Chemical mapping of a 177-nucleotide RNA with DMS and 2A3. The data come from the RNA Mapping Database (RMDB), library M2PK90. High DMS reactivity at an A or C suggests that its Watson-Crick edge is free.
RNA sequence: GGGAACGACUCGAGUAGAGUCGAAAAGCAUUGGGAAAGUAAAUCAAAAGUGCAUCAAAACUUUCCCUAAACGAAAUCAAAAUCGUUAUGAUGCACUUUUGACAUCGAUUAAGAUGAAUAGACACAAUCAUAUCUACCGGUUCGCCGGUAGAUAUGAAAAAGAAACAACAACAACAAC
Reactivity to DMS in 0.01 (KOAc 150mM, MgCl2 10mM, bicine 150mM(pH8.5), 24C), signal-to-noise 2, nucleotides 027 to 126: g010c130a080u000u020g000g010g010a120a090a100g000u000a120a040a110u000c020a000a010a020a020g000u000g000c010a020u010c000a090a110a060a160c140u000u000u000c000c000c000u000a010a020a010c000g000a010a040a090u040c300a070a080a130a090u000c000g020u000u000a240u000g000a020u000g000c000a010c000u000u000u000u000g000a050c020a030u000c020g010a220u020u010a120a130g000a000u000g000a060a110u010a090g000a140c160a060c110a050a120
Reactivity to 2A3 in 0.01 (KOAc 150mM, MgCl2 10mM, bicine 150mM(pH8.5), 24C), signal-to-noise 2, nucleotides 027 to 126: g030c000a080u160u180g010g020g050a030a090a010g060u110a100a010a080u040c010a000a000a000a030g010u000g000c000a010u000c040a000a080a060a120c010u000u000u010c010c010c000u020a040a000a010c010g010a030a000a030u280c110a090a080a000a180u060c010g040u020u040a060u160g010a010u000g000c000a010c000u000u010u000u020g010a020c020a020u010c000g100a090u130u190a120a170g050a010u030g000a070a070u150a090g090a020c040a010c000a100a040